[RMDB]
RNA sequence: GGGAACGACUCGAGUAGAGUCGAAAAGAUUAUGUGGGAGAGGCGCCCUUUCGUUUCCUCGGAUAAUUAAUUGCCAGUCGCUGGCUUUAGCGAUAUUGAUGUCAUCUGUAGCGAUGACUAUGCUACUUUAAGGUAUGAUCCGGAUACCUCCGGUAAAAAUCGAUAUAUCCUUCGGGAUAUAUCGAUUAAAAGAAACAACAACAACAAC
Reactivity to 2A3 in 0.01 (KOAc 150mM, MgCl2 10mM, bicine 150mM(pH8.5), 24C), signal-to-noise 3, nucleotides 027 to 156: g040a010u080u040a040u070g240u060g040g010g000a220g000a010g030g030c030g050c030c050c030u030u110u050c010g000u010u030u020c010c030u040c040g030g030a030u040a060a070u120u150a070a080u120u190g010c030c030a050g060u080c000g030c060u020g020g040c030u140u060u080a000g000c000g000a020u000a100u050u260g070a080u100g000u000c000a000u000c040u080g170u200a040g060c030g050a010u000g000a000c000u010a010u090g040c010u010a070c020u060u080u180a080a030g030g000u030a060u110g030a060u040c010c000g000g000a010u030a070c020c080u000c020c010g000g000u030a010a070a020
Reactivity to DMS in 0.01 (KOAc 150mM, MgCl2 10mM, bicine 150mM(pH8.5), 24C), signal-to-noise 2, nucleotides 027 to 156: g000a130u000u000a040u000g000u000g010g000g010a100g000a090g020g010c030g010c140c060c060u000u010u000c000g030u000u000u010c020c020u000c040g010g000a120u000a060a140u000u010a090a130u000u010g010c010c040a100g020u000c020g020c020u000g030g030c100u010u000u000a020g030c020g010a030u010a070u010u000g010a140u000g010u010c010a010u000c020u010g040u010a170g010c110g010a040u000g010a050c040u010a020u000g000c050u010a040c030u000u010u000a060a050g020g020u000a070u000g000a120u000c030c040g000g010a170u000a070c070c030u000c010c060g010g030u010a010a060a040